[RMDB]
An RNA of 177 nucleotides, treated with DMS and 2A3 and read out base by base.
The DMS profile rests on 2,120 reads.

RNA sequence: GGGAACGACUCGAGUAGAGUCGAAAAAUUCCUUUGAUGUUUCCCAGCCAGGGAUUGUCUUCCUCUAGUUUCUUGAUCUUCUUCUUGGCCUUCCGGAGAUCCUUCUCGAGAUCAUCCACUAACUUUCAGUAUUAUAAUCCUUCGGGAUUAUAAUACUAAAAGAAACAACAACAACAAC
Reactivity to DMS in 0.01 (KOAc 150mM, MgCl2 10mM, bicine 150mM(pH8.5), 24C), signal-to-noise 2, nucleotides 027 to 126: a190u000u000c010c010u000u010u010g000a100u000g010u010u010u000c000c020c020a180g000c070c100a080g000g010g020a050u010u000g010u000c050u010u000c030c000u010c100u000a130g020u000u010u010c030u010u010g010a080u000c030u010u010c040u000u000c030u010u000g010g020c050c030u000u000c050c060g010g000a200g000a030u000c030c030u000u000c020u010c050g010a060g010a120u000c030a120u000c010c020a120c280u010a080a100c050u000u000u000c060
Reactivity to 2A3 in 0.01 (KOAc 150mM, MgCl2 10mM, bicine 150mM(pH8.5), 24C), signal-to-noise 1, nucleotides 027 to 126: a000u070u030c020c000u050u070u090g090a090u050g000u030u080u080c010c010c050a000g070c060c020a030g030g000g010a050u060u090g050u020c020u060u030c000c000u000c010u000a050g100u030u070u040c030u040u060g070a060u050c000u090u020c000u080u000c000u030u050g060g030c000c000u020u040c060c000g080g000a070g000a050u020c000c000u040u060c020u000c010g040a050g030a120u030c030a060u040c010c000a070c080u070a110a060c050u020u040u060c010

For DMS the reverse transcriptase was MarathonRT. For 2A3, 800 sequencing reads were counted. Reactivities are given for positions 27 through 126. The reactions ran in a buffer of 150 mM KOAc, 10 mM MgCl2 and 150 mM bicine (pH 8.5), at 24 C.